[RMDB]
RNA sequence: GGGAACGACUCGAGUAGAGUCGAAAAUAGGUGUGAGUGUUUCCAUUUUACAGAUGAUGAAAUUGAGGCUCAUUGAUCUAAACAAUUGGAUUUUGUCUUCAUAGGCAUUAUGAGGGCUUACUAGACCAACAAUAGUGAUAAUAAUAACUGUUUAGUACUAUUACGACCCUUUCGAGGGUCGUAAUAGAAAAGAAACAACAACAACAAC
Reactivity to DMS in 0.01 (KOAc 150mM, MgCl2 10mM, bicine 150mM(pH8.5), 24C), signal-to-noise 1, nucleotides 027 to 156: u000a030g010g040u000g020u010g040a090g050u020g000u030u010u000c040c020a110u010u000u010u000a300c010a100g000a100u000g010a160u000g000a050a070a050u020u000g040a090g000g070c070u000c100a060u000u000g030a090u010c010u010a070a090a050c060a020a120u000u000g000g010a300u000u000u010u000g000u010c000u000u000c020a000u000a090g040g030c190a060u000u000a030u000g030a080g020g000g020c020u030u010a080c100u010a060g020a160c030c020a030a010c060a100a190u000a060g010u010g010a090u030a080a100u010a120a120u000a080a080c060u010g030u000u010u000a080g030u010a230
Reactivity to 2A3 in 0.01 (KOAc 150mM, MgCl2 10mM, bicine 150mM(pH8.5), 24C), signal-to-noise 2, nucleotides 027 to 156: u080a010g040g000u040g010u020g030a030g000u020g060u040u020u050c000c010a010u020u030u030u070a070c050a050g070a090u100g030a060u020g010a100a060a000u120u040g010a010g010g000c040u020c020a060u030u130g030a040u050c010u100a110a000a000c040a110a170u060u110g010g010a000u100u030u020u060g000u050c000u010u030c010a030u030a070g180g060c060a100u150u080a030u030g010a000g030g000g000c010u030u000a030c040u060a020g100a100c000c010a000a080c020a070a040u080a090g040u030g050a040u090a180a060u150a060a010u050a080a070c000u020g020u030u000u040a020g010u030a040